[RMDB]
RNA sequence: GGGAACGACUCGAGUAGAGUCGAAAAGGUUAUACACCUUGGACCAAGCUAAGAUGCAUUGCGGAGCUUGUGGGUACGGUUGGGCUUAGUCGAAGCACAGUCAUGCAAGUGGCUAGUUGUAAUGCUACGUCAUAGGAGAGUUCGCUCUCCUAUGACGAAAAGAAACAACAACAACAAC
Reactivity to 2A3 in 0.01 (KOAc 150mM, MgCl2 10mM, bicine 150mM(pH8.5), 24C), signal-to-noise 2, nucleotides 027 to 126: g040g000u120u040a160u020a300c100a020c010c010u000u000g000g010a020c000c010a000a020g040c030u220a190a010g160a180u100g010c010a040u040u030g000c040g030g030a030g030c000u040u080g070u110g130g040g010u060a010c030g010g040u040u020g000g040g040c000u030u020a090g140u300c120g130a060a010g000c000a000c010a050g000u020c000a020u080g020c030a000a000g030u000g040g030c010u020a030g070u040u120g020u030a070a000u040g000c020u010a000
Reactivity to DMS in 0.01 (KOAc 150mM, MgCl2 10mM, bicine 150mM(pH8.5), 24C), signal-to-noise 3, nucleotides 027 to 126: g010g000u000u020a150u000a150c200a050c000c000u000u010g010g010a270c030c010a110a090g010c150u000a090a100g010a120u010g000c030a030u000u000g000c020g030g010a160g010c020u020u000g030u020g000g010g010u000a050c090g000g010u000u000g000g000g030c010u000u020a090g030u010c150g000a080a020g020c010a030c060a030g010u000c010a070u010g000c110a070a090g020u010g020g020c020u000a070g020u010u000g000u010a020a030u000g010c030u000a170